The data come from the RNA Mapping Database (RMDB), library RNAMAK. Chemical mapping of a 207-nucleotide RNA with 2A3. The reactions ran in a buffer of 150 mM KOAc, 10 mM MgCl2 and 150 mM bicine (pH 8.5), at 24 C. The 2A3 profile rests on 842 reads. For 2A3 the reverse transcriptase was SuperScript II with manganese.

[RMDB]
RNA sequence: GGGAACGACUCGAGUAGAGUCGAAAAGCACCUUGUUUCGACAAGGUGCCGCUAACCUUUGUGACAGCGAUGAAGGGUCUCCCCACCGUGUACCCAUUGGGUCACGAGGACCUGGAGCUGUCACUCUGGUAUACAUCUGAGACUUCGGUCUCAGAAAGAGGUCCAGAAGAUUCGUCUUCUGGACCUCAAAAGAAACAACAACAACAAC
Reactivity to 2A3 in 0.01 (KOAc 150mM, MgCl2 10mM, bicine 150mM(pH8.5), 24C), signal-to-noise 1, nucleotides 027 to 156: g000c010a000c000c000u030u000g080u010u110u080c240g130a010c000a000a000g030g000u010g000c000c010g040c030u150a150a060c000c000u000u000u020g000u020g010a000c010a010g050c070g300a300u040g020a060a090g000g050g000u030c060u030c050c050c010c000a030c000c050g020u020g070u200a050c020c020c050a190u140u300g000g000g000u010c010a010c000g020a030g000g000a000c000c000u020g000g010a000g020c000u000g000u000c000a000c000u000c000u000g000g010u040a030u050a170c070a020u000c000u000g000a000g000a010c000u010u110c300g240g000u000c000u020c000a000g000a000a000a020